RNA sequence: GGGAACGACUCGAGUAGAGUCGAAAAAAGUCUCGUUGUUCAAAAAGUCCAUCAAACACAAGACCCUCUGAUAUACCCCAGUCACCAAACACAGCAACUUUUGCACGAUUAGGGUUGCGCACCACCAAUCUAGAACAGGGUUCGCCCUGUUCUAGAUAAAAGAAACAACAACAACAAC
Reactivity to DMS in 0.01 (KOAc 150mM, MgCl2 10mM, bicine 150mM(pH8.5), 24C), signal-to-noise 2, nucleotides 027 to 126: a110a100g010u010c000u010c040g020u010u000g000u010u010c070a060a060a110a040a090g000u000c020c020a050u000c040a050a100a060c010a060c040a060a050g000a090c050c010c020u000c030u000g000a090u010a080u000a140c050c000c000c040a120g000u000c020a030c050c070a040a080a070c130a080c090a080g000c080a020a090c120u030u000u010u020g000c130a040c100g010a080u000u000a030g040g000g000u000u020g000c070g040c140a120c010c020a070c090c070a050